[RMDB]
RNA sequence: GGGAACGACUCGAGUAGAGUCGAAAACGAGCGGCAUCGUAAAGCCUGGUGACCCUGGCCACUCGGAGAGUGGACCUAGCCGGCGCUGAAAUGCGCUGGGAGAGACUGAAAUCGGGGCCCAGGGUGAUCACCAUCCAGAAUUCGUUCUGGAUGGUGAAAAAGAAACAACAACAACAAC
Reactivity to 2A3 in 0.01 (KOAc 150mM, MgCl2 10mM, bicine 150mM(pH8.5), 24C), signal-to-noise 4, nucleotides 027 to 126: c020g010a030g040c070g100g030c050a080u060c080g130u150a060a030a070g170c000c010u010g000g020u040g020a060c000c010c020u010g000g000c000c000a020c030u030c060g190g060a110g000a000g100u010g000g060a120c000c000u010a020g000c000c000g000g000c000g000c010u000g010a010a000a000u050g000c000g000c000u010g000g000g000a020g010a000g010a010c100u010g010a000a020a020u030c060g000g010g020g000c000c000c000a000g000g000g010u030g030a060
Reactivity to DMS in 0.01 (KOAc 150mM, MgCl2 10mM, bicine 150mM(pH8.5), 24C), signal-to-noise 2, nucleotides 027 to 126: c060g000a080g020c070g000g010c050a050u020c060g000u020a070a110a120g010c000c000u010g000g010u010g010a030c000c000c000u010g010g000c020c000a000c000u000c020g000g010a100g000a020g010u000g000g000a100c000c000u000a000g030c000c010g010g010c000g020c010u000g000a180a060a020u000g010c010g000c000u010g000g020g000a100g000a020g000a020c170u000g000a000a030a020u010c120g000g010g000g010c010c000c000a000g000g010g010u010g010a100

Chemical mapping of a 177-nucleotide RNA with 2A3 and DMS. The reactions ran in a buffer of 150 mM KOAc, 10 mM MgCl2 and 150 mM bicine (pH 8.5), at 24 C. High 2A3 reactivity points to a flexible backbone, as in loops and unpaired stretches.